Structure probing data (2A3 and DMS) for a 177-nucleotide construct.
RNA sequence: GGGAACGACUCGAGUAGAGUCGAAAACGGAAACACAAUCACAGCGCACAGGCCGAGGUGAGAGUCCAAUGGCGUCGGGACUGAAUCGCGACCUCGGACUGGCAGAAGUCGUCGCGAUCAGUAUCGGAAAUAGCGUGGUGUUCGCACCACGCUAUUUAAAAGAAACAACAACAACAAC
Reactivity to 2A3 in 0.01 (KOAc 150mM, MgCl2 10mM, bicine 150mM(pH8.5), 24C), signal-to-noise 1, nucleotides 027 to 126: c030g040g110a090a030a000c060a000c060a090a090u130c030a020c010a110g050c030g000c050a060c010a160g070g000c000c020g000a020g000g000u060g040a080g000a020g040u000c000c010a020a140u130g040g060c030g090u060c010g000g010g040a020c030u020g020a180a110u040c020g000c020g070a020c000c000u040c010g010g010a010c020u030g010g000c020a040g060a070a000g030u070c010g030u000c000g000c010g000a010u010c030a000g020u080a060u080c030g030g060
Reactivity to DMS in 0.01 (KOAc 150mM, MgCl2 10mM, bicine 150mM(pH8.5), 24C), signal-to-noise 2, nucleotides 027 to 126: c050g010g000a090a070a020c080a050c160a060a060u020c070a030c100a110g010c070g010c070a080c110a010g010g000c020c030g000a050g000g000u010g010a060g010a130g000u020c010c000a090a090u010g030g000c090g030u000c050g000g000g010a050c020u000g000a100a090u010c020g010c050g000a040c010c080u000c070g000g000a000c030u000g010g000c110a090g010a110a090g000u000c080g010u000c010g010c010g000a030u010c040a070g010u010a070u000c040g000g000
The 2A3 profile rests on 1,473 reads. Reactivities are rounded to 0.1 and cut off at 0 and 3. DMS (dimethyl sulfate) methylates the pairing face of unpaired adenines and cytosines.